[RMDB]
RNA sequence: GGGAACGACUCGAGUAGAGUCGAAAAGCGUACUACCAGACAUGAACGGACUAGGAGCGAUAAGAAAGCUCCCAAAUAGGAGCUUUCUUUUGACGCUCCUGGACUGUUCAACAGCUGGUAUCGCAAAGAUAAGUGGACGUUCGCGUCCACUUAUCAAGUGAUUGAUUUUCUUCGGAAAAUCAAUCACAAAAGAAACAACAACAACAAC
Reactivity to 2A3 in 0.01 (KOAc 150mM, MgCl2 10mM, bicine 150mM(pH8.5), 24C), signal-to-noise 1, nucleotides 027 to 156: g000c000g020u050a150c030u000a000c000c000a030g100a240c000a100u060g000a020a000c010g010g000a000c040u000a010g000g030a020g000c000g050a040u020a040a000g000a000a000a000g000c020u020c130c020c000a130a240a070u300a120g000g000a000g020c050u010u000u010c000u020u020u000u020g000a010c000g000c000u010c000c000u000g000g000a010c000u000g000u000u000c000a020a010c010a000g030c000u000g000g010u040a050u300c000g010c000a000a060a030g000a000u000a000a000g000u010g000g020a000c000g060u100u150c260g010c000g140u010c000c000a000c000u000u000a000u000c000a010a000

The data come from the RNA Mapping Database (RMDB), library RNAMAK.
This 207-nucleotide RNA was probed chemically with 2A3.
The 2A3 profile rests on 1,022 reads.
The RNA was probed in 150 mM KOAc, 10 mM MgCl2 and 150 mM bicine (pH 8.5) at 24 C.
Values are in units of 0.01, from 0 to 300, in steps of 10.